[RMDB]
RNA sequence: GGGAACGACUCGAGUAGAGUCGAAAAGCUACCAGCGGCUGCUACACCCGUGGGUGAACAUGGCGAUGGACACCGUGGUCGCGAUCGAACCCGAGAUCGUCACCGGCAUCCGCAUCGUUGCUGACUCACGUUUAUCGUCUUUCGAGACGAUAAACGUAAAAGAAACAACAACAACAAC
Reactivity to 2A3 in 0.01 (KOAc 150mM, MgCl2 10mM, bicine 150mM(pH8.5), 24C), signal-to-noise 5, nucleotides 027 to 126: g020c030u080a050c050c040a010g020c000g070g000c030u030g000c010u060a040c030a080c060c020c030g060u160g070g050g000u040g050a060a040c060a070u080g050g000c040g060a060u050g040g000a050c040a020c070c050g080u100g010g040u030c030g000c030g030a030u120c020g030a040a060c020c020c010g030a040g000a050u010c020g080u040c050a020c050c000g030g000c010a040u010c020c000g000c020a100u090c060g030u010u060g000c020u020g010a060c020u020c030
Reactivity to DMS in 0.01 (KOAc 150mM, MgCl2 10mM, bicine 150mM(pH8.5), 24C), signal-to-noise 4, nucleotides 027 to 126: g020c060u020a050c050c070a140g010c010g000g000c090u000g000c020u000a140c090a050c070c000c110g020u030g030g010g010u000g020a050a100c170a070u000g030g000c160g030a090u000g020g020a160c060a100c070c020g000u010g030g000u000c260g010c030g000a000u000c010g010a090a080c040c030c040g020a210g000a030u000c010g010u030c280a040c090c030g010g030c040a060u020c010c020g010c030a030u030c200g010u000u010g000c010u000g020a090c050u000c160

Record summary:
An RNA of 177 nucleotides, treated with 2A3 and DMS and read out base by base. For 2A3 the reverse transcriptase was SuperScript II with manganese. Conditions: 150 mM KOAc, 10 mM MgCl2 and 150 mM bicine (pH 8.5), 24 C. For DMS, 4,595 sequencing reads were counted. DMS adducts were read by reverse transcription with MarathonRT. Source: RMDB library OK1LIB, as collected in RNAgym. The 2A3 profile rests on 4,286 reads.